[RMDB]
RNA sequence: GGGAACGACUCGAGUAGAGUCGAAAAUGGGUUAGUAUACCAACUAGUUACUUCCGGUAACUUGGAGUUUGUAGUGACGUAAGUUUCGUCCUAAGAGGACUCAUCAGGUAGCCUAAUAGACUACGACGAUAGUAAAUUGCUUCGGCAAUUUACUAUCAAAAGAAACAACAACAACAAC
Reactivity to 2A3 in 0.01 (KOAc 150mM, MgCl2 10mM, bicine 150mM(pH8.5), 24C), signal-to-noise 3, nucleotides 027 to 126: u100g020g010g010u020u020a060g040u050a070u030a070c010c000a040a060c020u010a010g010u030u000a020c010u150u090c140c200g030g000u010a000a000c000u000u050g150g000a020g010u040u040u060g110u080a040g000u070g140a000c020g040u070a060a300g100u110u230u230c000g010u030c010c000u070a100a030g210a080g090g060a010c000u000c010a070u040c020a000g000g050u000a000g000c000c010u040a100a040u090a040g160a080c020u040a060c150g110a030c080
Reactivity to DMS in 0.01 (KOAc 150mM, MgCl2 10mM, bicine 150mM(pH8.5), 24C), signal-to-noise 5, nucleotides 027 to 126: u010g010g000g020u000u000a070g010u010a090u000a050c030c010a100a300c080u000a010g010u010u010a010c010u000u010c210c180g000g010u000a010a010c030u000u000g010g000a040g000u000u000u010g020u000a020g010u010g000a010c020g020u000a100a190g040u000u010u000c000g020u000c010c000u000a030a110g010a150g010g010a010c000u000c010a140u010c160a100g000g010u000a010g010c030c020u000a060a080u000a110g010a070c040u000a030c080g010a130c190
An RNA of 177 nucleotides, treated with 2A3 and DMS and read out base by base. For 2A3 the reverse transcriptase was SuperScript II with manganese. The DMS profile rests on 5,104 reads. For 2A3, 2,771 sequencing reads were counted. It was measured as part of the RMDB library VIROID.